[RMDB]
The record gives the reactivity of an RNA of 177 nucleotides to 2A3 and DMS. Conditions: 150 mM KOAc, 10 mM MgCl2 and 150 mM bicine (pH 8.5), 24 C. Values cover nucleotides 27 to 126. The data come from the RNA Mapping Database (RMDB), library 15KREP.
RNA sequence: GGGAACGACUCGAGUAGAGUCGAAAAACCGGCUCAUCUCGGCAAAAGGCGGCAGUCCUCAGUACUCUUACUCUUUCCUAUAAAGAGGAGACUGCUGGACUCGCCGCCCGAGCCCGAGCAUGGGCCCCAUGUUCUUUCUGUUCGCAGAAAGAACAUGAAAAGAAACAACAACAACAAC
Reactivity to 2A3 in 0.01 (KOAc 150mM, MgCl2 10mM, bicine 150mM(pH8.5), 24C), signal-to-noise 2, nucleotides 027 to 126: a000c010c000g010g010c020u020c000a010u000c000u000c010g000g000c000a060a120a020a000g020g000c000g000g030c000a000g000u000c000c000u010c010a010g010u130a290c030u000c030u080u140a230c000u020c010u020u110u060c080c070u190a170u220a300a020a000g000a000g000g000a000g010a000c000u010g040c050u000g000g000a010c000u000c020g010c000c000g010c010c000c000g000a000g000c000c010c000g000a000g000c030a000u000g020g010g000c040c010c000
Reactivity to DMS in 0.01 (KOAc 150mM, MgCl2 10mM, bicine 150mM(pH8.5), 24C), signal-to-noise 1, nucleotides 027 to 126: a130c030c020g020g000c000u000c000a030u000c000u010c010g000g000c070a030a060a260a090g000g010c000g000g010c020a000g010u000c000c040u020c000a010g030u000a170c070u010c010u010u000a300c030u000c000u000u010u000c230c260u000a100u010a030a030a010g010a010g000g010a040g000a040c000u000g030c230u010g040g010a000c000u000c090g070c000c010g050c000c010c010g000a280g000c160c010c020g010a000g010c110a000u010g000g000g000c010c000c070